[RMDB]
RNA sequence: GGGAACGACUCGAGUAGAGUCGAAAAAGGACUGCCAACCUGGCAGUGUGCAAUGACAACAAAUCACCACGAGACGUUUCAUUUAAAAAUUGGCACUGCUUUUGGGGAGGUAAGGGAUUGUCAAUUUACAUUAAUCUCGUUUCGACGAGAUUAAUGUAAAAGAAACAACAACAACAAC
Reactivity to 2A3 in 0.01 (KOAc 150mM, MgCl2 10mM, bicine 150mM(pH8.5), 24C), signal-to-noise 5, nucleotides 027 to 126: a030g060g040a040c010u020g000c010c000a040a040c060c020u020g020g000c000a000g010u010g010u030g150c020a030a030u030g040a050c030a060a020c010a030a200a060u110c040a060c170c010a080c180g040a030g000a030c050g010u030u020u040c100a110u140u250u300a080a130a030a060a070u060u040g000g000c000a000c010u020g010c000u030u070u140u220g020g010g000g010a020g030g000u070a110a050g100g000g050a230u040u030g020u010c000a030a030u010u010u000
Reactivity to DMS in 0.01 (KOAc 150mM, MgCl2 10mM, bicine 150mM(pH8.5), 24C), signal-to-noise 2, nucleotides 027 to 126: a120g000g000a100c000u000g010c010c010a060a290c040c020u030g040g000c000a000g000u000g030u000g000c010a040a020u030g000a070c140a050a100c080a060a160a150u010c070a090c090c120a220c100g010a030g050a200c110g000u010u010u010c010a080u010u010u020a050a090a070a090a060u010u030g000g000c000a030c020u000g020c000u000u000u000u010g030g000g000g010a260g000g010u020a020a040g020g020g030a110u010u000g010u000c020a060a110u000u000u010